[RMDB]
RNA sequence: GGGAACGACUCGAGUAGAGUCGAAAAGAUAUGGACAAUACUCAAGCAUUAACGUCAACAACAGCAUAGGGUUCGGAAACGAACCUAUGACAUGUUGGUGUUAAUGCUUGAGUAUUGUCCUAAGUCAGUGAUGACAAUAGUUCGCUAUUGUCAUCACAAAAGAAACAACAACAACAAC
Reactivity to DMS in 0.01 (KOAc 150mM, MgCl2 10mM, bicine 150mM(pH8.5), 24C), signal-to-noise 3, nucleotides 027 to 126: g000a060u000a300u000g020g000a020c000a010a000u000a010c010u000c000a010a010g000c000a020u000u000a020a020c010g020u000c000a010a010c000a080a120c300a200g000c000a020u000a030g030g030g000u010u000c000g030g000a110a070a210c000g020a000a020c010c000u000a000u000g000a040c090a220u000g010u000u010g000g010u010g000u000u000a010a000u010g000c000u000u000g000a000g000u000a000u000u000g000u000c000c000u000a000a060g000u010c070a150